[RMDB]
RNA sequence: GGGAACGACUCGAGUAGAGUCGAAAAAAUCAUGCCGGAAUGAAAUCACGCCUCGGUACGGCUCCGCGCGUGGGCAGGUACGUCCCACCGCCGGUGGGCAGGGUCGCUCCGCUCAGCGGUACGCCCCCGAGGGGUGGGGUUCGUAACUUCCGGUCGCGCUGUAACAUACGUUCGCGUAUGUUACAGCAAAAGAAACAACAACAACAAC
Reactivity to 2A3 in 0.01 (KOAc 150mM, MgCl2 10mM, bicine 150mM(pH8.5), 24C), signal-to-noise 3, nucleotides 027 to 156: a000a040u250c130a110u150g010c010c010g000g030a050a030u080g000a040a080a020u080c000a010c030g300c000c000u000c010g000g010u090a100c050g000g000c000u000c000c020g000c000g000c050g060u220g010g020g000c020a040g140g020u160a050c040g210u240c040c000c000a010c000c030g270c060c110g030g000u090g030g010g070c060a090g200g050g030u090c040g010c010u020c040c010g010c040u100c120a050g000c000g020g030u030a040c110g000c000c000c000c020c000g000a010g010g010g000g000u000g000g010g010g040u030u040c040g040u050a030a070c030u000u000c060c020g000g010u050c030g030c010

An RNA of 207 nucleotides, treated with 2A3 and read out base by base. For 2A3 the reverse transcriptase was SuperScript II with manganese. The 2A3 profile rests on 1,231 reads. The RNA was probed in 150 mM KOAc, 10 mM MgCl2 and 150 mM bicine (pH 8.5) at 24 C. As a SHAPE reagent, 2A3 marks flexible, mostly unpaired nucleotides at the ribose 2'-OH.